[RMDB]
Structure probing data (2A3) for a 177-nucleotide construct. The reactions ran in a buffer of 150 mM KOAc, 10 mM MgCl2 and 150 mM bicine (pH 8.5), at 24 C. The 2A3 profile rests on 417 reads. Reactivities are given for positions 27 through 126.
RNA sequence: GGGAACGACUCGAGUAGAGUCGAAAACUGAGAUAGCGAGAGGCAUUUAAACUCUUUAUCCUCAUUUUCUGCGGUUCUGCGGUUUCCGCUAUCUCUCCAGUCUUCGCAGAAAUCUACUAAUACAUCCAGCGGAGGCAGUAUUCGUACUGCCUCCGCUAAAAGAAACAACAACAACAAC
Reactivity to 2A3 in 0.01 (KOAc 150mM, MgCl2 10mM, bicine 150mM(pH8.5), 24C), signal-to-noise 1, nucleotides 027 to 126: c000u010g010a010g000a000u000a000g000c000g010a050g020a020g210g030c000a000u000u000u300a090a120a100c050u150c000u020u050u190a100u060c000c050u060c160a110u090u070u130u140c140u030g060c070g110g000u090u040c050u090g000c040g060g000u030u060u000c020c000g000c060u000a000u000c060u000c000u000c040c000a050g010u000c000u170u120c030g000c000a040g100a040a020a020u080c100u220a050c010u100a000a120u050a230c060a170u000c050c020